[RMDB]
RNA sequence: GGGAACGACUCGAGUAGAGUCGAAAAAGCUGCAGAGGGGGCAGUGACAGGCGGGUGGGUGUGGCAGGACCCCACAAUGUCUCUUUCUGUGGCGUCUCCUUCUUCGCCUGCCCCUUCCUAUGGGCCAUCCUUCCAGCUCACCUGCGGCCCACCCUCACGUGCAUUAAUAUUUCGAUAUUAAUGCACGAAAAGAAACAACAACAACAAC
Reactivity to 2A3 in 0.01 (KOAc 150mM, MgCl2 10mM, bicine 150mM(pH8.5), 24C), signal-to-noise 1, nucleotides 027 to 156: a000g000c020u030g010c020a040g010a090g010g050g040g000g000c030a030g060u110g100a100c100a040g010g070c030g000g030g000u040g000g000g030u140g010u040g080g000c010a040g000g000a000c040c020c020c000a010c050a010a030u170g060u070c070u060c040u170u300u100c140u070g040u030g000g000c020g040u060c060u010c040c000u050u100c020u060u070c050g000c000c000u020g000c000c000c000c000u080u070c030c020u080a120u070g000g060g010c060c010a100u150c020c000u150u050c000c000a030g020c010u010c030a070c000c030u010g030c000g000g010c000c020c000a040c000c000c000u010c010a010

Chemical mapping of a 207-nucleotide RNA with 2A3. Conditions: 150 mM KOAc, 10 mM MgCl2 and 150 mM bicine (pH 8.5), 24 C. The data come from the RNA Mapping Database (RMDB), library OK3TST.